[RMDB]
RNA sequence: GGGAACGACUCGAGUAGAGUCGAAAAAAGAUCUGGAAGACCUGCUAAACAUGAUCGAAGAAACUACGCUGGGCCGCCAUCACGCGACCAACAUCGUGAUUCCUCCGUCUAAGCGUCGUCUUCUGACGAAAAAGAUGCCGGACACUAGCGGCGACUCAGUCGUACCUGAGUUCGCUCAGGUACGACUAAAAGAAACAACAACAACAAC
Reactivity to 2A3 in 0.01 (KOAc 150mM, MgCl2 10mM, bicine 150mM(pH8.5), 24C), signal-to-noise 1, nucleotides 027 to 156: a010a000g090a080u030c040u050g060g000a060a000g070a070c030c040u010g010c070u090a080a000a080c020a100u070g000a070u020c030g000a040a010g020a010a040a060c040u050a010c040g010c010u010g000g060g000c030c020g090c050c000a020u030c030a000c050g000c030g090a070c060c160a070a070c010a110u040c010g030u030g030a060u030u010c010c000u040c010c010g010u000c040u070a070a000g000c020g100u010c000g000u070c090u130u010c050u080g050a050c010g000a000a000a000a020a000g110a050u080g030c020c010g040g060a000c040a050c210u050a070g100c010g090g000c000g060a050c070u110c120
This 207-nucleotide RNA was probed chemically with 2A3. The reactions ran in a buffer of 150 mM KOAc, 10 mM MgCl2 and 150 mM bicine (pH 8.5), at 24 C. For 2A3, 497 sequencing reads were counted. It was measured as part of the RMDB library OK3TST.